Conditions: 150 mM KOAc, 10 mM MgCl2 and 150 mM bicine (pH 8.5), 24 C.
Chemical mapping of a 177-nucleotide RNA with 2A3 and DMS.
It was measured as part of the RMDB library M2PK50.
DMS adducts were read by reverse transcription with MarathonRT.

RNA sequence: GGGAACGACUCGAGUAGAGUCGAAAAGUUCAUGUGUUCGCACAUGAACAAAAGACGGAGAGAAAAGCACCAUGGACUCAACCGUCGAAAACCUAAGGUGCAAAAGUGGGGGGUUCGCCCCCCACAACGCUAUCUUGUAGUUCGCUACAAGAUAGCGAAAAGAAACAACAACAACAAC
Reactivity to 2A3 in 0.01 (KOAc 150mM, MgCl2 10mM, bicine 150mM(pH8.5), 24C), signal-to-noise 2, nucleotides 027 to 126: g000u010u010c000a010u000g020u000g050u020u040c150g050c100a000c000a000u000g000a000a000c010a000a090a000a030g000a010c010g000g020a020g000a020g000a040a170a050a020g010c010a000c000c020a070u150g130g040a090c020u020c030a100a150c140c020g040u020c020g020a110a080a000a010c000c010u030a100a100g000g000u010g030c040a060a000a040a110g000u000g010g010g000g000g020g010u010u010c040g090c000c020c020c010c000c000a000c000a000a010
Reactivity to DMS in 0.01 (KOAc 150mM, MgCl2 10mM, bicine 150mM(pH8.5), 24C), signal-to-noise 1, nucleotides 027 to 126: g000u000u000c020a000u000g020u000g020u000u000c180g010c000a000c000a000u000g000a000a000c010a050a040a140a190g000a000c000g000g000a300g000a020g050a110a100a110a100g040c000a050c030c000a230u020g000g020a190c000u020c050a150a050c020c020g010u000c000g000a010a040a120a100c020c000u000a050a070g020g050u000g020c010a070a060a130a110g060u000g040g000g010g000g030g000u000u000c240g000c050c000c000c000c000c000a000c000a000a050